Source information
Source: RMDB library RNAMAK, as collected in RNAgym. The record gives the reactivity of an RNA of 207 nucleotides to 2A3. 2A3 adducts were read by reverse transcription with SuperScript II with manganese. Values cover nucleotides 27 to 156.

RNA sequence: GGGAACGACUCGAGUAGAGUCGAAAAGAUAUGGAGCGCCAGAGACAUGCUGAGUGUUACAGCUAUAUCGGAAACGAUAUAGAAGGUGGCUCAGCAACAGCUCUGACGCUCCUAAGUCAAACCCCCGUUUUGGUGUUUCGACACCAAAACGGGGGAAGAACAGUAGUUACUUCGGUAACUACUGUUCAAAAGAAACAACAACAACAAC
Reactivity to 2A3 in 0.01 (KOAc 150mM, MgCl2 10mM, bicine 150mM(pH8.5), 24C), signal-to-noise 2, nucleotides 027 to 156: g000a000u020a010u070g000g010a010g000c010g000c010c010a000g010a010g030a190c050a120u060g000c000u010g010a020g010u130g100u300u190a040c010a020g020c000u000a000u000a000u020c000g000g000a050a030a000c000g000a000u010a000u010a000g030a060a050g090g070u090g180g000c000u010c010a030g010c020a030a040c030a030g020c000u020c000u000g000a000c010g010c000u000c000c000u000a000a000g000u000c010a010a030a120c000c000c000c000c000g000u000u000u000u000g000g000u000g000u020u100u090c200g060a020c010a000c040c000a000a000a000a010c000g000g010g000g000g010a000a010